Source: RMDB library OK3TST, as collected in RNAgym. This 207-nucleotide RNA was probed chemically with 2A3 and DMS. DMS adducts were read by reverse transcription with MarathonRT. The RNA was probed in 150 mM KOAc, 10 mM MgCl2 and 150 mM bicine (pH 8.5) at 24 C.
RNA sequence: GGGAACGACUCGAGUAGAGUCGAAAACGCAUGCGAGAGCAUGCGGCUAAGCUUCGGCUUAGCAACGUCGGAUAACUGCUCGAAGACGUGAUGGAUCGAGAUGAAGAUUUAUCAGAAUCACGACUAGGCAGAUGCACCUGGUCUGUGUAGAGCAGAAGGCACAUUCCAUGUUCGCAUGGAGUGUGCCAAAAGAAACAACAACAACAAC
Reactivity to 2A3 in 0.01 (KOAc 150mM, MgCl2 10mM, bicine 150mM(pH8.5), 24C), signal-to-noise 6, nucleotides 027 to 156: c010g000c000a010u000g000c010g020a070g010a010g050c000a000u000g010c000g000g000c000u000a000a000g010c000u030u160c240g050g000c000u000u000a000g000c010a010a030c010g040u020c010g020g010a090u060a270a230c000u010g000c010u010c000g020a050a010g000a010c030g040u000g000a020u010g010g000a000u000c020g020a010g040a280u290g090a140a100g000a020u010u020u010a010u010c000a020g090a100a030u060c010a010c010g000a000c000u000a000g000g060c060a090g050a100u120g040c050a040c030c000u000g010g010u010c100u180g000u020g010u030a010g010a000g000c000a000g010a000a020
Reactivity to DMS in 0.01 (KOAc 150mM, MgCl2 10mM, bicine 150mM(pH8.5), 24C), signal-to-noise 2, nucleotides 027 to 156: c040g000c010a010u000g000c020g030a300g010a260g010c010a010u000g020c000g030g000c000u000a010a020g000c000u000u000c300g160g000c000u000u000a010g060c000a050a040c020g000u000c030g000g000a120u000a010a110c020u000g030c010u000c000g010a130a300g000a030c040g010u000g010a020u010g000g000a050u000c020g010a300g040a300u010g020a110a280g000a020u000u000u000a020u010c010a080g010a100a060u000c000a050c010g000a020c020u000a050g010g000c030a110g000a130u010g010c080a100c020c000u000g010g000u000c000u000g070u000g030u010a120g000a020g020c030a020g000a090a090